[RMDB]
This 177-nucleotide RNA was probed chemically with 2A3 and DMS.
Conditions: 150 mM KOAc, 10 mM MgCl2 and 150 mM bicine (pH 8.5), 24 C.
2A3 adducts were read by reverse transcription with SuperScript II with manganese.
The data come from the RNA Mapping Database (RMDB), libraries RFM100 and RFMREP.
RNA sequence: GGGAACGACUCGAGUAGAGUCGAAAAUGUCAGGUCCGGAAGGAAGCAGCAUUAAUCAGUGCUUCUCAUGUGCCGCGAGGUUGCCUGGCCCGAGCUAACUAUCAAGGUAACGCAGGUGAUUGCAUGUCAAAGACAUUAUAUUCGUAUAAUGUCUUUGAAAAGAAACAACAACAACAAC
Reactivity to 2A3 in 0.01 (KOAc 150mM, MgCl2 10mM, bicine 150mM(pH8.5), 24C), signal-to-noise 9, nucleotides 027 to 126: u140g030u050c010a010g020g020u010c010c020g040g060a050a050g030g010a030a000g000c020a000g010c020a050u060u170a090a100u170c080a030g060u010g040c000u020u020c020u010c020a060u100g050u080g070c010c010g030c050g030a040g040g030u060u060g020c000c010u020g010g000c000c000c010g020a030g020c020u060a030a070c010u030a060u260c050a110a050g070g010u050a060a030c040g010c040a020g000g040u040g040a110u050u100g030c060a050u100g030u070
Reactivity to DMS in 0.01 (KOAc 150mM, MgCl2 10mM, bicine 150mM(pH8.5), 24C), signal-to-noise 9, nucleotides 027 to 126: u020g000u020c030a270g000g000u010c040c020g000g060a130a140g010g010a040a020g010c030a140g000c040a060u010u010a100a110u030c170a100g010u010g010c020u000u010c010u000c060a100u020g010u000g000c020c030g010c170g000a080g010g000u000u010g010c040c010u000g000g000c020c020c030g010a110g000c060u000a080a060c070u010a070u020c100a080a120g000g010u010a050a090c080g010c040a050g000g010u000g010a060u000u010g000c070a080u020g010u000